[RMDB]
RNA sequence: GGGAACGACUCGAGUAGAGUCGAAAAAGUUCAGUGAAGCGCCAGUAAACGGCGGGGGUAACUAUAACCCUCUUAAGGUAGCGAAAUGCCUUGUCGGACAAGUACCGACCUGCAUGAAUGGUAGAACUCAAAAUACUUCAUUCGUGAAGUAUUUUGAAAAAGAAACAACAACAACAAC
Reactivity to DMS in 0.01 (KOAc 150mM, MgCl2 10mM, bicine 150mM(pH8.5), 24C), signal-to-noise 9, nucleotides 027 to 126: a110g010u000u010c040a080g020u020g000a100a090g020c030g020c010c000a080g020u020a070a110a120c140g000g030c140g010g000g000g000g000u000a070a090c150u020a100u030a110a070c030c000c010u010c070u020u020a060a070g000g010u000a050g010c110g000a080a110a080u010g010c010c050u000u010g010u000c040g000g010a060c090a100a100g010u020a050c010c000g000a020c010c070u000g000c030a040u000g000a070a060u010g000g010u010a060g010a100a090c130
Reactivity to 2A3 in 0.01 (KOAc 150mM, MgCl2 10mM, bicine 150mM(pH8.5), 24C), signal-to-noise 9, nucleotides 027 to 126: a000g050u060u040c050a020g020u030g160a110a020g060c010g000c030c010a040g040u170a090a120a070c070g020g000c000g000g000g000g000g000u040a070a010c040u030a050u100a270a100c010c000c000u020c000u060u090a050a020g040g000u040a030g080c060g120a080a100a050u080g000c010c020u020u050g000u010c010g000g030a050c070a210a040g020u030a070c000c000g010a030c000c010u020g010c010a070u040g050a110a030u040g030g010u030a040g020a060a020c020